[RMDB]
RNA sequence: GGGAACGACUCGAGUAGAGUCGAAAAAAGCGGGAUGAUGAAUCCGACCAUGAUGGUGUUGCAGAAAUUUAUGUAUGAUGUAGUUAUUGUCCAGGGAUCGAAACACCAUCAUGGUCAGAUCCGUCAUAUGCAGGUGACCAUUCGUGGUCACCUGCAUAAAAGAAACAACAACAACAAC
Reactivity to 2A3 in 0.01 (KOAc 150mM, MgCl2 10mM, bicine 150mM(pH8.5), 24C), signal-to-noise 1, nucleotides 027 to 126: a000a060g100c080g140g030g000a020u040g000a030u040g000a110a030u020c030c020g000a010c000c020a000u000g000a000u000g000g000u000g000u050u050g080c110a020g050a030a120a040u140u140u060a110u100g060u000a020u100g050a000u010g080u150a160g050u180u130a050u070u000g000u020c000c030a040g190g000g000a160u090c010g030a000a010a010c010a000c000c020a000u000c000a000u000g000g040u000c000a020g000a000u030c000c000g020u000c010a000u020
Record summary
The record gives the reactivity of an RNA of 177 nucleotides to 2A3.